[RMDB]
An RNA of 177 nucleotides, treated with DMS and 2A3 and read out base by base. Values cover nucleotides 27 to 126. It was measured as part of the RMDB library OK1LIB. For DMS, 2,546 sequencing reads were counted. The 2A3 profile rests on 570 reads.
RNA sequence: GGGAACGACUCGAGUAGAGUCGAAAAAUUGCUUUGUAGAAGAAGUACAAUUUGAUGAUGGUGUUGGUGAUUUUAGACUUUUAAGCCAAAGAGCUGUUAAAUCCAUUGCAUCACUUGAAGAAUAUAACACAACUUCGGGAUUCGUCCCGAAGUUGUGAAAAGAAACAACAACAACAAC
Reactivity to DMS in 0.01 (KOAc 150mM, MgCl2 10mM, bicine 150mM(pH8.5), 24C), signal-to-noise 2, nucleotides 027 to 126: a030u000u010g000c040u000u010u010g000u000a140g000a230a280g010a000a030g010u020a070c160a000a040u000u020u010g000a080u000g000a050u000g000g000u040g010u000u000g010g000u050g010a090u000u010u000u000a070g000a060c060u000u000u050u020a060a070g000c020c130a120a100a080g000a060g000c000u010g000u010u000a020a020a030u010c010c060a060u030u030g000c030a010u000c010a000c010u000u020g000a100a100g010a100a060u040a070u050a040a290
Reactivity to 2A3 in 0.01 (KOAc 150mM, MgCl2 10mM, bicine 150mM(pH8.5), 24C), signal-to-noise 2, nucleotides 027 to 126: a000u180u080g070c050u160u030u030g040u030a060g080a230a000g000a000a000g080u090a060c110a110a180u000u030u210g060a090u050g070a100u000g040g020u000g000u010u010g000g000u030g030a040u000u000u150u000a060g030a010c010u070u030u180u040a110a090g000c020c040a270a190a000g070a020g000c000u000g020u150u040a040a010a030u000c000c010a000u030u180g050c000a000u090c000a040c000u010u000g020a150a030g110a300a010u220a000u060a160a000